[RMDB]
RNA sequence: GGGAACGACUCGAGUAGAGUCGAAAAGCGAUCAAUAAUAAGUCGACGACUCGAAAGAGUCCCAUGGAAACAUGCGUACUAAUGCGUCCAAUGUAGGUCGACGAUUAGGACGCAGAAGAUCGCGAAAGCCUAUUACUGGCUUCGGCCAGUAAUAGGCAAAAGAAACAACAACAACAAC
Reactivity to DMS in 0.01 (KOAc 150mM, MgCl2 10mM, bicine 150mM(pH8.5), 24C), signal-to-noise 1, nucleotides 027 to 126: g000c000g030a000u000c060a200a300u020a210a020u020a050a270g000u080c210g030a220c000g000a000c070u000c020g000a190a200a250g000a040g000u070c000c070c000a060u010g000g010a050a110a250c000a070u000g000c000g040u000a150c000u000a120a090u000g020c000g130u000c000c050a020a000u000g010u060a070g000g010u050c100g000a000c000g000a100u000u000a050g000g000a000c000g000c010a000g000a180a130g010a070u000c010g010c000g000a150a080a080
Reactivity to 2A3 in 0.01 (KOAc 150mM, MgCl2 10mM, bicine 150mM(pH8.5), 24C), signal-to-noise 3, nucleotides 027 to 126: g080c010g000a020u080c100a070a080u210a220a010u150a300a000g040u000c010g050a010c000g000a000c000u020c000g010a050a040a030g010a010g000u010c000c000c000a000u150g080g100a050a060a000c030a070u130g000c000g030u060a060c000u030a050a010u020g180c000g000u040c020c030a030a070u120g060u080a050g160g070u100c120g030a050c000g030a000u000u040a040g010g000a000c000g010c000a000g000a010a000g000a010u010c010g000c020g000a050a010a000
Source: RMDB library OK1LIB, as collected in RNAgym.
The record gives the reactivity of an RNA of 177 nucleotides to DMS and 2A3.
The RNA was probed in 150 mM KOAc, 10 mM MgCl2 and 150 mM bicine (pH 8.5) at 24 C.
For 2A3, 1,566 sequencing reads were counted.
For DMS the reverse transcriptase was MarathonRT.
For DMS, 1,279 sequencing reads were counted.
For 2A3 the reverse transcriptase was SuperScript II with manganese.